[RMDB]
Structure probing data (2A3) for a 207-nucleotide construct.

RNA sequence: GGGAACGACUCGAGUAGAGUCGAAAAUCCUUUAGUUUCCUUCCUCUCCUGGGGAGGUCUUCUGCCCUAGCCCGGUCUUCGAAGCUUCCUUUGGCUACUACCCGGUGGAAACAACUGAAGCUUCAACGCCUUUUUUUCCUAUCUUCUUUAGCACCGGCCUAUGAAGUAAGUUCGCUUACUUCAUAGGAAAAGAAACAACAACAACAAC
Reactivity to 2A3 in 0.01 (KOAc 150mM, MgCl2 10mM, bicine 150mM(pH8.5), 24C), signal-to-noise 2, nucleotides 027 to 156: u040c020c000u050u100u120a100g000u040u090u030c000c000u010u050c000c010u070c020u070c030c090u130g010g010g010g010a020g030g000u000c000u050u010c020u040g050c010c010c040u050a040g050c040c020c010g060g020u040c030u120u080c180g010a020a000g010c000u000u020c000c000u000u030u050g040g000c050u060a050c000u060a070c020c040c010g030g000u030g030g050a150a140a050c000a010a010c030u010g000a010a000g000c000u030u020c030a070a050c010g050c010c000u030u080u060u060u020u110u130c030c000u100a240u210c110u170u060c020u080u180u110a060g030c000a030c010c030g020g000
For 2A3, 1,416 sequencing reads were counted. The data come from the RNA Mapping Database (RMDB), library VIROID.